This 177-nucleotide RNA was probed chemically with DMS. The RNA was probed in 150 mM KOAc, 10 mM MgCl2 and 150 mM bicine (pH 8.5) at 24 C. For DMS, 1,438 sequencing reads were counted.

RNA sequence: GGGAACGACUCGAGUAGAGUCGAAAAUUCGUGAUCGAGACAGCGCGCCAGCUGAAGCGGGCGCACGGCUGCUUCCAGGACGGCCGCUCCCCCGGGCCGCCGCCGCCCGUCGGGGUCAAGACAGUGGAUCUUAGGCUAGGUUCGCCUAGCCUAAGAUAAAAGAAACAACAACAACAAC
Reactivity to DMS in 0.01 (KOAc 150mM, MgCl2 10mM, bicine 150mM(pH8.5), 24C), signal-to-noise 1, nucleotides 027 to 126: u000u000c080g000u000g020a080u000c040g020a160g000a090c090a060g010c020g010c090g000c040c030a050g010c030u010g030a100a100g000c010g000g010g000c000g020c100a030c110g010g000c000u000g010c030u000u010c100c090a070g000g010a060c040g010g010c000c000g020c080u010c000c020c010c060c030g000g010g010c010c020g000c030c020g000c080c050g030c000c020c040g000u000c050g020g010g000g000u010c020a070a100g000a030c110a090g020u010g000g010